[RMDB]
RNA sequence: GGGAACGACUCGAGUAGAGUCGAAAAGGCUGGGUACUUCUGCUGUAACGGCCGGGCAAUUCACUCCAGUUUGCCCAAAAUUGCAGCCGUCAAUUUUGGUAAUUAAAUUGUAGUGCUCAAUUUGCCACGAUAAUGAGCCGUUCGCGGCUCAUUAUCGAAAAGAAACAACAACAACAAC
Reactivity to DMS in 0.01 (KOAc 150mM, MgCl2 10mM, bicine 150mM(pH8.5), 24C), signal-to-noise 1, nucleotides 027 to 126: g000g000c000u000g030g000g050u000a060c020u000u010c130u000g050c130u000g010u020a030a050c000g000g000c030c040g000g010g060c000a020a000u040u000c000a060c010u050c030c010a050g000u000u000u000g010c110c000c000a000a000a000a010u020u000g010c020a300g000c190c200g000u060c040a000a000u000u000u000u040g000g000u000a130a040u030u030a040a000a000u000u000g000u000a000g000u010g030c300u000c090a050a070u000u000u000g000c010c000a260
Reactivity to 2A3 in 0.01 (KOAc 150mM, MgCl2 10mM, bicine 150mM(pH8.5), 24C), signal-to-noise 3, nucleotides 027 to 126: g030g000c020u040g000g120g110u020a070c020u080u200c100u160g130c110u100g010u010a010a000c000g060g000c000c020g000g000g010c000a010a020u070u040c000a010c060u040c030c010a000g010u000u020u070g020c000c000c030a000a010a000a000u020u010g000c030a080g110c080c060g110u160c030a010a020u000u010u000u070g120g040u060a120a140u060u150a010a130a000u040u030g010u040a030g000u030g020c050u040c110a050a050u040u020u080g000c020c000a030